[RMDB]
RNA sequence: GGGAACGACUCGAGUAGAGUCGAAAACAGCCUAUUGAGGGGAGGGUCGGUGAGCAAGGUUAUGAUAAUGAGGCGUUUGAAGGGUCAGACAUCGACCCUGCUGAGGAAGCCACCGUGAGCAUCUCCGUAUUAAUAAGACCUUCGGGUCUUAUUAAUAAAAAGAAACAACAACAACAAC
Reactivity to DMS in 0.01 (KOAc 150mM, MgCl2 10mM, bicine 150mM(pH8.5), 24C), signal-to-noise 5, nucleotides 027 to 126: c160a170g000c020c010u000a110u010u000g020a100g010g010g000g000a050g000g010g010u010c020g010g000u000g010a170g030c030a090a110g020g010u010u010a080u010g000a120u010a050a120u000g010a190g010g000c030g030u000u010u020g020a140a030g010g010g000u000c000a100g010a120c260a110u010c140g000a010c000c000c000u000g000c030u000g000a140g010g010a110a100g010c020c010a020c040c030g010u010g010a090g000c070a070u000c030u000c020c030g020
Reactivity to 2A3 in 0.01 (KOAc 150mM, MgCl2 10mM, bicine 150mM(pH8.5), 24C), signal-to-noise 3, nucleotides 027 to 126: c010a010g110c020c010u070a160u130u120g100a090g000g030g010g000a020g000g020g060u020c030g040g030u030g020a120g060c040a060a070g100g000u210u170a090u250g090a080u060a190a100u130g080a030g080g060c060g040u050u090u220g090a040a020g010g000g020u000c000a020g050a220c080a120u130c080g000a010c000c010c000u000g020c000u020g020a060g000g090a060a010g000c000c000a020c000c000g000u020g000a040g100c010a040u020c000u020c020c000g000
Chemical mapping of a 177-nucleotide RNA with DMS and 2A3.
For DMS, 5,740 sequencing reads were counted.
The RNA was probed in 150 mM KOAc, 10 mM MgCl2 and 150 mM bicine (pH 8.5) at 24 C.